This 207-nucleotide RNA was probed chemically with DMS and 2A3.
Values cover nucleotides 27 to 156.
For DMS the reverse transcriptase was MarathonRT.
Source: RMDB library M2RFPK, as collected in RNAgym.

RNA sequence: GGGAACGACUCGAGUAGAGUCGAAAACAGGAAACUGGCUAAUCGUUUUCCUUGGUAGUAUAGCGGAAACCAUAAAUAAGAAGAACUCUAAGUGCUUGAGUAGAGUUAAAAUAAUUAGACAGGCAAUUAAGGUACUCCACGUUCGCGUGGAGUACAAUCAUGUCUUUACCUUCGGGUAAAGACAUGAAAAAGAAACAACAACAACAAC
Reactivity to DMS in 0.01 (KOAc 150mM, MgCl2 10mM, bicine 150mM(pH8.5), 24C), signal-to-noise 1, nucleotides 027 to 156: c060a130g000g000a060a110a040c110u020g080g030c070u010a100a080u000c040g030u030u000u000u000c010c040u000u030g030g010u010a110g030u000a090u010a060g020c050g040g000a060a040a060c050c020a080u000a030a110a100u000a040a180g010a130a110g020a040a060c000u000c010u030a040a210g010u000g030c100u000u000g040a100g040u000a080g010a090g000u000u000a040a020a050a110u010a040a040u000u000a100g030a170c010a030g010g010c010a110a080u000u000a090a140g000g000u000a010c000u010c000c000a020c020g020u000u000c280g000c010g150u000g030g000a010g030u000a020c020a000a040
Reactivity to 2A3 in 0.01 (KOAc 150mM, MgCl2 10mM, bicine 150mM(pH8.5), 24C), signal-to-noise 4, nucleotides 027 to 156: c020a010g070g040a060a000a040c040u160g050g010c060u120a120a060u140c030g000u020u020u020u060c000c010u010u030g060g010u010a090g010u030a060u100a170g070c050g020g020a020a050a060c010c010a030u070a140a110a010u130a120a040g090a050a020g020a050a000c000u000c000u010a000a010g010u040g240c000u010u000g000a010g010u000a010g010a000g020u100u140a020a010a000a010u110a020a000u250u010a000g010a010c000a000g000g000c000a010a010u210u170a150a030g090g000u000a010c000u000c000c000a000c000g020u020u050c170g000c010g110u000g000g020a000g010u000a000c000a000a000